The data come from the RNA Mapping Database (RMDB), library TTRDEL. Chemical mapping of a 177-nucleotide RNA with 2A3 and DMS.
RNA sequence: GGGAACGACUCGAGUAGAGUCGAAAAGAUAUGGAAGGCUGGAGUCGUAAAGACUAUUCGGAAACGAACGAAUCUUUAUACGACGAUGAAAGCCUUCCUAAGUCAAAUCAGUACUUCGGUACUGAAACUAAAUGUGCUAGUUCGCUAGCACAUUUAGAAAAGAAACAACAACAACAAC
Reactivity to 2A3 in 0.01 (KOAc 150mM, MgCl2 10mM, bicine 150mM(pH8.5), 24C), signal-to-noise 2, nucleotides 027 to 126: g000a000u070a020u140g000g010a020a000g020g000c020u010g000g020a010g000u020c010g010u010a000a040a000g020a020c050u050a040u010u000c010g000g050a080a100a100c030g040a030a020c030g040a100a280u010c000u070u100u030a270u030a120c000g000a020c000g060a110u040g010a020a020a020g000c000c000u000u000c000c000u000a000a000g010u010c010a000a020a230u020c000a000g000u030a000c010u040u160c300g120g000u000a000c000u030g030a040a010a000
Reactivity to DMS in 0.01 (KOAc 150mM, MgCl2 10mM, bicine 150mM(pH8.5), 24C), signal-to-noise 3, nucleotides 027 to 126: g000a050u000a300u000g000g020a040a010g020g010c000u010g000g020a120g020u000c000g020u010a020a030a040g000a030c050u000a300u000u000c000g000g000a090a100a180c040g000a000a030c090g030a090a050u000c000u000u000u000a120u000a050c020g010a020c000g000a100u000g010a150a120a040g000c000c000u000u000c000c000u000a020a100g010u010c030a080a100a150u000c000a010g020u000a000c000u000u000c230g040g020u000a000c010u000g010a010a090a210